[RMDB]
RNA sequence: GGGAACGACUCGAGUAGAGUCGAAAAGGAGUUCACACGUACAGCUUGCAGAUGGAUCAGUUGUUCCAAUAGAUGAACCAUCCAGACAACUAAUUUUGUUGAGACUUCAUGAGAUGAGUUCGAAAGGUGAUCUUUCCAGUUUCGACUGGAAAGAUCAAAAAGAAACAACAACAACAAC
Reactivity to DMS in 0.01 (KOAc 150mM, MgCl2 10mM, bicine 150mM(pH8.5), 24C), signal-to-noise 3, nucleotides 027 to 126: g000g000a120g020u000u000c040a030c080a080c070g000u000a110c120a080g010c060u020u010g000c090a110g000a080u000g000g000a060u010c030a080g010u010u000g000u000u000c020c040a100a120u020a110g010a140u010g010a020a020c030c020a020u000c000c010a090g020a090c020a000a040c050u060a080a170u010u010u010u000g010u000u000g000a150g010a100c160u020u010c100a060u000g010a140g010a060u000g000a110g010u000u010c020g000a070a080a070g000g020
Reactivity to 2A3 in 0.01 (KOAc 150mM, MgCl2 10mM, bicine 150mM(pH8.5), 24C), signal-to-noise 2, nucleotides 027 to 126: g020g000a030g040u050u100c050a030c000a020c070g030u160a060c010a080g060c040u080u130g080c040a030g010a180u100g090g040a080u140c070a040g020u020u030g000u030u000c040c000a120a120u170a090g200a140u210g010a000a000c000c010a000u060c010c000a020g030a090c020a050a010c010u080a100a250u180u160u180u110g000u010u020g000a060g100a110c010u080u030c080a090u060g010a030g000a200u050g020a040g030u000u000c020g080a040a090a020g120g040

This 177-nucleotide RNA was probed chemically with DMS and 2A3. It was measured as part of the RMDB library OK2TRN.